[RMDB]
RNA sequence: GGGAACGACUCGAGUAGAGUCGAAAAGAAAGAAAGAAAGCGGUUGGGUGGGUCCAUCGACCGUCGUGGCGUAUUCGGACGCUUUACCGCGACGCGAGGAAAUAGCGAGACCGACCACCCCCUUUAACAGAGGUAUAGUAGUUCGCUACUAUACCAAUCAUUACUAGGCGUUCGCGCCUAGUAAUGAAAAAGAAACAACAACAACAAC
Reactivity to DMS in 0.01 (KOAc 150mM, MgCl2 10mM, bicine 150mM(pH8.5), 24C), signal-to-noise 1, nucleotides 027 to 156: g000a180a100a140g000a120a070a150g000a100a210a190g020c050g010g020u000u000g000g000g010u000g000g000g000u010c030c050a060u010c180g020a100c120c000g010u000c010g060u020g040g020c000g000u000a100u000u020c050g000g010a170c020g000c080u020u010u030a020c010c000g010c020g010a010c020g000c030g030a110g010g010a020a040a080u000a030g020c020g030a160g010a140c050c010g000a040c000c030a030c010c000c000c020c000u010u000u010a090a180c100a170g000a110g020g010u000a000u000a040g010u000a070g010u000u010c300g050c000u000a030c000u000a020u000a020c000c000a040a060
Reactivity to 2A3 in 0.01 (KOAc 150mM, MgCl2 10mM, bicine 150mM(pH8.5), 24C), signal-to-noise 2, nucleotides 027 to 156: g040a070a060a010g020a040a110a010g060a030a080a000g040c110g070g090u230u160g090g030g040u040g030g000g020u010c040c040a100u070c000g060a070c020c020g030u030c000g000u020g010g020c010g020u060a170u070u120c050g150g060a010c020g020c020u110u050u060a060c040c010g000c000g000a000c000g000c000g000a030g040g060a100a150a030u070a050g000c070g010a040g030a080c000c010g020a020c000c000a000c000c000c010c000c000u020u090u060a080a010c020a070g060a010g150g010u000a010u010a000g010u000a000g000u040u050c160g010c170u010a000c010u000a010u000a010c010c000a000a010

Background:
The record gives the reactivity of an RNA of 207 nucleotides to DMS and 2A3. For DMS, 1,623 sequencing reads were counted. For DMS the reverse transcriptase was MarathonRT. Values cover nucleotides 27 to 156.